RNA sequence: GGGAACGACUCGAGUAGAGUCGAAAAGGAGCCUUGCCGCGUCACUUAAUGUCAUGCAAGGCCGGAUACAGACGAUGCUGCGAGAGCGUACGAGGGUGCUCCGAGCCAUCAGCCACGACCUCAGAACGAGUAUGCUCCUAUUCGUAGGAGCAUACUCAAAAGAAACAACAACAACAAC
Reactivity to 2A3 in 0.01 (KOAc 150mM, MgCl2 10mM, bicine 150mM(pH8.5), 24C), signal-to-noise 8, nucleotides 027 to 126: g080g010a040g020c000c000u010u010g020c030c050g100c110g050u040c020a050c120u100u270a180a060u240g040u090c030a020u110g000c020a010a010g010g000c000c000g020g020a040u080a120c070a030g050a010c020g040a040u050g030c030u080g080c020g020a110g010a020g110c020g030u040a060c070g040a090g040g070g010u110g000c010u000c030c020g000a010g030c040c010a070u060c010a020g040c030c000a080c030g060a070c000c020u050c020a040g040a090a050c070
Reactivity to DMS in 0.01 (KOAc 150mM, MgCl2 10mM, bicine 150mM(pH8.5), 24C), signal-to-noise 3, nucleotides 027 to 126: g010g010a210g050c010c000u010u000g010c010c190g000c100g000u000c060a060c190u040u130a070a130u010g020u000c050a040u020g000c000a030a040g010g010c000c000g030g020a040u010a030c080a150g000a090c040g010a050u000g010c020u000g000c000g010a090g010a080g000c030g000u000a040c040g010a050g000g010g010u020g040c040u010c060c010g000a110g000c000c000a010u030c060a030g000c020c010a050c060g000a100c030c040u010c060a160g020a060a100c180
Source information: The data come from the RNA Mapping Database (RMDB), library OK1LIB. This 177-nucleotide RNA was probed chemically with 2A3 and DMS. DMS adducts were read by reverse transcription with MarathonRT. The RNA was probed in 150 mM KOAc, 10 mM MgCl2 and 150 mM bicine (pH 8.5) at 24 C.